The data come from the RNA Mapping Database (RMDB), library RFMREP.
The record gives the reactivity of an RNA of 177 nucleotides to DMS.
Conditions: 150 mM KOAc, 10 mM MgCl2 and 150 mM bicine (pH 8.5), 24 C.
RNA sequence: GGGAACGACUCGAGUAGAGUCGAAAAUAUAAAAGAUAAUGGAAUACAUUUUAUAGACUGGAUUUUAUCUGUUCCCUUGGCCUCUCCUGGCUGUACUCAGUUUAAUAGUCGUCAGUUUUUCUCCGUGCUAUCACUAAAACUUCGGUUUUAGUGAUAGAAAAGAAACAACAACAACAAC
Reactivity to DMS in 0.01 (KOAc 150mM, MgCl2 10mM, bicine 150mM(pH8.5), 24C), signal-to-noise 2, nucleotides 027 to 126: u000a050u000a040a050a050a070g010a130u000a090a050u010g010g000a220a120u000a070c030a050u000u000u010u000a060u010a060g000a110c100u000g010g000a040u010u010u000u010a010u020c040u010g030u010u000c000c020c010u010u000g000g020c020c010u010c100u010c070c060u010g000g000c040u000g030u000a040c060u010c060a060g010u000u010u010a040a150u010a040g020u000c020g010u000c060a080g020u010u010u020u010u000c040u010c020c060g040u000g010